RNA sequence: GGGAACGACUCGAGUAGAGUCGAAAAUGAGAUAGCUAAAUCACCUUGGUAUGAUUAGGGUGAGACCUAGGAACCGUAGGGGUAUUCUCAAAGGAAGCUUUUGCAGUGACGCCCAUGUAAGUGGGAUAAGAACCAACCCACUUCGGUGGGUUGGUAACCAUGGAACGUUGUUCGCAACGUUCCAUGGAAAAGAAACAACAACAACAAC
Reactivity to 2A3 in 0.01 (KOAc 150mM, MgCl2 10mM, bicine 150mM(pH8.5), 24C), signal-to-noise 1, nucleotides 027 to 156: u130g020a050g010a030u070a050g050c050u130a000a220a000u080c010a030c000c000u020u000g060g020u230a130u230g060a110u220u050a020g020g000g010u050g010a020g050a030c000c020u020a050g030g000a040a020c000c010g010u050a040g030g050g020g000u050a110u060u050c050u000c000a130a130a050g130g010a090a020g010c000u050u090u160u130g070c090a070g000u000g060a030c040g030c000c000c040a010u030g100u100a140a130g020u030g030g040g010a040u110a150a070g020a010a000c000c000a000a000c000c000c000a020c010u020u030c030g060g000u000g000g000g000u000u000g000g000u000a000a000